[RMDB]
RNA sequence: GGGAACGACUCGAGUAGAGUCGAAAAGAAAAAAUAGAGAGCUUUGCGAGACCUACCAAGGGUGAAGAGAUACCAUCCAAGGAGCUGAAGAGAAAUCUCACUUUAGACGCCUGGGGAACUCGGACUAAAAAGCUUCGUACGUUCGCGUACGAAGCAACUAUGUGUUUUUGUUCGCAAAAACACAUAGAAAAGAAACAACAACAACAAC
Reactivity to 2A3 in 0.01 (KOAc 150mM, MgCl2 10mM, bicine 150mM(pH8.5), 24C), signal-to-noise 1, nucleotides 027 to 156: g000a000a070a030a000a000a000u150a010g040a020g020a000g010c040u080u140u110g040c050g000a050g000a110c000c040u010a090c030c030a050a060g030g000g000u070g020a030a030g020a020g000a040u050a110c000c030a050u010c010c010a070a010g020g000a020g060c070u090g050a100a040g020a040g060a090a100a170u030c040u040c030a030c010u110u020u040a100g020a140c050g090c070c040u010g000g010g000g040a020a020c000u030c120g010g080a020c080u180a080a130a060a000a000g000c000u000u000c000g000u000a000c000g050u010u120c300g020c010g030u000a010c000g000a000a020g000c040a000a000